[RMDB]
RNA sequence: GGGAACGACUCGAGUAGAGUCGAAAAGUGAUCCGUAUCUCCUUUCAUCAUGGAAAGUUAUGCUGUGAAGCACCCUUCUGCUUUUGCUAUUUCUGGAUCUUCAUUCCAUCUUCGUCCAUGUCAUUGCUACGCGAUAUUCGUUCGCGAAUAUCGCGUAAAAAGAAACAACAACAACAAC
Reactivity to DMS in 0.01 (KOAc 150mM, MgCl2 10mM, bicine 150mM(pH8.5), 24C), signal-to-noise 2, nucleotides 027 to 126: g010u010g010a030u000c040c040g020u000a080u000c040u000c050c000u000u000u000c050a130u010c110a070u010g000g000a030a070a090g010u010u000a030u000g000c020u000g010u000g000a170a050g020c020a070c070c020c060u000u010c090u000g000c030u010u000u010u010g020c060u000a100u000u000u000c070u000g000g000a050u000c050u010u020c020a110u020u020c080c010a120u000c060u000u000c040g010u000c010c030a050u000g000u000c080a100u010u020g020c240
Reactivity to 2A3 in 0.01 (KOAc 150mM, MgCl2 10mM, bicine 150mM(pH8.5), 24C), signal-to-noise 2, nucleotides 027 to 126: g050u050g020a060u040c010c020g010u020a070u050c090u090c010c020u070u200u110c030a130u020c020a050u120g090g000a090a020a010g040u080u060a020u100g020c030u050g020u020g060a040a000g030c010a050c050c030c000u090u040c010u020g010c000u110u120u080u060g020c020u040a050u080u140u050c080u040g020g030a080u080c000u030u020c050a070u020u020c020c000a110u020c010u070u020c030g040u020c020c010a020u060g050u080c030a040u020u180g020c010
Chemical mapping of a 177-nucleotide RNA with DMS and 2A3. For DMS, 2,037 sequencing reads were counted. The RNA was probed in 150 mM KOAc, 10 mM MgCl2 and 150 mM bicine (pH 8.5) at 24 C.